[RMDB]
RNA sequence: GGGAACGACUCGAGUAGAGUCGAAAAGACUGAUGAAAGACUUGCACAGUGCCCAGUGCGCAGGAGGCGCUUGGCAAUCAGCAUCCUCGGCCUCCCUCCAUACUGGUCAUGGAAAGUGGAUUUUCCAAUUACUGCUAAAUUUCGAUUUAGCAGUAAUAAAAGAAACAACAACAACAAC
Reactivity to DMS in 0.01 (KOAc 150mM, MgCl2 10mM, bicine 150mM(pH8.5), 24C), signal-to-noise 9, nucleotides 027 to 126: g010a120c070u010g010a100u010g010a120a100a120g010a070c060u000u000g010c110a070c050a110g010u000g010c070c010c020a040g010u000g020c080g020c300a070g000g010a060g010g010c040g010c030u000u000g010g010c300a070a060u010c140a080g010c140a100u000c010c010u000c060g010g010c010c010u000c020c010c020u000c080c020a050u010a050c050u000g010g000u000c030a050u000g000g000a050a040a060g010u000g000g000a190u000u000u000u000c010c020a130
Reactivity to 2A3 in 0.01 (KOAc 150mM, MgCl2 10mM, bicine 150mM(pH8.5), 24C), signal-to-noise 9, nucleotides 027 to 126: g040a040c060u070g050a050u120g070a240a100a050g070a050c040u050u080g020c100a030c020a100g020u010g010c000c000c000a010g010u030g010c070g000c050a030g070g070a030g010g020c090g020c300u030u030g010g000c030a030a150u090c030a110g070c030a090u070c000c010u010c010g030g000c000c010u030c020c020c000u030c020c010a030u040a080c020u040g030g010u030c020a020u040g030g030a130a050a030g030u070g050g050a090u050u030u020u000c010c000a010